[RMDB]
About this RNA:
This 177-nucleotide RNA was probed chemically with DMS and 2A3. The RNA was probed in 150 mM KOAc, 10 mM MgCl2 and 150 mM bicine (pH 8.5) at 24 C.
RNA sequence: GGGAACGACUCGAGUAGAGUCGAAAAGAUAUGGACACCCGUGGACAUGAUUGGGAGUCGGAAACGACUCCUGAUCAACAGCCACAGGGUGUCCUAAGUCAAAGCGACCGAGUUCGCUCGGUCGCAACAUAUCUUCCUCGUUCGCGAGGAAGAUAUGAAAAGAAACAACAACAACAAC
Reactivity to DMS in 0.01 (KOAc 150mM, MgCl2 10mM, bicine 150mM(pH8.5), 24C), signal-to-noise 4, nucleotides 027 to 126: g000a020u000a170u010g000g010a010c000a000c000c000c000g020u000g000g010a060c120a130u020g010a010u000u000g010g000g000a020g020u000c000g010g020a030a050a100c000g020a010c000u000c000c000u010g000a000u000c010a060a080c280a190g000c000c000a000c000a180g000g000g010u000g000u000c000c000u000a000a070g020u000c010a120a140a150g020c000g010a000c000c010g000a020g010u000u010c250g010c000u000c000g010g000u000c010g010c000a020a040
Reactivity to 2A3 in 0.01 (KOAc 150mM, MgCl2 10mM, bicine 150mM(pH8.5), 24C), signal-to-noise 3, nucleotides 027 to 126: g010a010u050a030u110g010g000a000c000a010c010c010c030g020u010g000g030a160c190a300u300g000a000u010u020g000g000g000a000g000u000c010g020g010a060a020a000c000g000a000c000u010c000c010u010g000a000u000c010a010a030c080a050g040c000c000a010c020a020g000g010g010u000g000u000c000c000u000a000a000g000u000c010a020a030a090g020c000g000a010c010c010g010a000g020u120u200c300g080c220u000c000g050g000u000c000g000c010a000a020
Record summary:
Source: RMDB library TTRDES, as collected in RNAgym.